RNA sequence: GGGAACGACUCGAGUAGAGUCGAAAAACUCGCCCUUUCAAACAAGGUACCAAACCACCAAGCAUAUCCAUAGCGGAAGGCAGCAGUGUCGGCAAACAAGUAUGAUAGAGACCUAGAGGUGAGGAAGGCCUUCUGUCCCUUUCGAGGGACAGAAGGCAAAAGAAACAACAACAACAAC
Reactivity to DMS in 0.01 (KOAc 150mM, MgCl2 10mM, bicine 150mM(pH8.5), 24C), signal-to-noise 1, nucleotides 027 to 126: a120c000u000c000g020c000c040c040u000u050u000c170a070a140a060c110a080a120g000g010u000a140c150c000a050a280a030c170c150a020c000c180a000a200g080c080a000u000a000u000c060c170a000u000a060g000c050g000g000a250a080g000g000c000a000g000c300a230g080u000g000u000c110g030g000c070a080a000a170c120a170a150g030u050a000u000g000a200u000a030g000a000g040a090c000c000u000a070g000a000g110g000u000g000a040g000g000a080a230g080
Reactivity to 2A3 in 0.01 (KOAc 150mM, MgCl2 10mM, bicine 150mM(pH8.5), 24C), signal-to-noise 2, nucleotides 027 to 126: a000c030u040c020g000c010c000c010u000u110u000c230a130a130a090c010a090a000g060g000u100a040c050c130a100a020a000c000c000a000c000c000a000a000g000c010a050u030a030u160c030c030a000u130a070g050c010g070g000a000a070g050g010c050a010g000c040a000g040u050g020u090c030g000g070c000a040a040a040c060a150a110g000u050a080u060g040a000u040a070g100a020g000a030c000c000u020a000g010a040g140g000u030g050a030g060g030a030a090g100